An RNA of 207 nucleotides, treated with 2A3 and DMS and read out base by base. The data come from the RNA Mapping Database (RMDB), library OK3TST.
RNA sequence: GGGAACGACUCGAGUAGAGUCGAAAAUUGAAUUCACGGAUCCAGAAGAUUUCAGUUAUCCGUAUACUCACGGGUUUUUCUGUGGGGACGGCACAUACCACUCGACGUACUCCGGAUUCAAAACGAUUCCAGCAGUCUCACUGUACGGUGAAAAGAACAAGCGAUAUCAUUUCGAUGAUAUCGCUUGAAAAGAAACAACAACAACAAC
Reactivity to 2A3 in 0.01 (KOAc 150mM, MgCl2 10mM, bicine 150mM(pH8.5), 24C), signal-to-noise 5, nucleotides 027 to 156: u010u010g010a000a010u110u070c080a040c150g030g000a010u020c040c080a060g030a140a020g040a180u090u180u150c080a030g030u070u050a080u100c000c010g010u050a080u140a130c000u020c010a000c010g000g010g070u060u190u040u230u140c000u010g010u010g010g000g000g010a000c010g000g050c090a040c010a090u120a050c020c040a030c060u030c020g060a040c070g050u050a050c040u000c010c020g000g000a000u030u010c000a010a010a020a070c070g030a040u060u000c020c000a020g020c020a010g130u030c030u010c050a020c020u040g110u270a090c080g050g000u050g020a040a100a050a050g060a060a020
Reactivity to DMS in 0.01 (KOAc 150mM, MgCl2 10mM, bicine 150mM(pH8.5), 24C), signal-to-noise 2, nucleotides 027 to 156: u000u000g010a070a050u000u000c030a100c040g030g010a060u000c050c050a210g000a170a200g010a130u000u000u010c080a150g000u000u020a070u010c000c020g000u000a100u010a150c030u000c000a040c010g010g000g020u030u010u000u020u000c000u000g040u010g000g020g020g030a010c030g000g050c090a040c070a140u000a060c010c030a160c140u000c060g000a120c050g030u000a060c050u010c040c010g000g000a080u020u000c030a020a070a040a140c130g000a150u010u000c020c010a130g000c040a100g000u000c000u000c030a040c040u010g030u010a050c110g000g010u000g010a010a110a080a090g020a060a250

For DMS, 2,984 sequencing reads were counted. For 2A3 the reverse transcriptase was SuperScript II with manganese.